[RMDB]
RNA sequence: GGGAACGACUCGAGUAGAGUCGAAAAUCCAAAACCGCUCCAAUGACUUCCUUUUUAUUGAUUUUUCCUUUUCUUUCCUUGGUUUAGUUUAUUUAUGAUAAGUUAUUGCAAGAAAGGAUAGGAAAAAAGACGGUAUUUUGUUCGCAAAAUACCGUCUAAAAGAAACAACAACAACAAC
Reactivity to 2A3 in 0.01 (KOAc 150mM, MgCl2 10mM, bicine 150mM(pH8.5), 24C), signal-to-noise 1, nucleotides 027 to 126: u040c000c000a070a080a000a020c010c010g040c010u000c030c010a040a030u050g080a080c020u070u040c020c000u060u140u110u180u150a160u040u210g020a050u020u010u040u010u000c000c000u010u010u000u020c000u010u000u050c040c010u030u020g250g000u300u040u000a010g010u030u000u000a050u080u120u050a260u300g020a000u000a000a000g000u000u010a010u000u030g090c000a010a000g000a000a000a010g020g010a000u000a000g000g000a000a000a000a000a000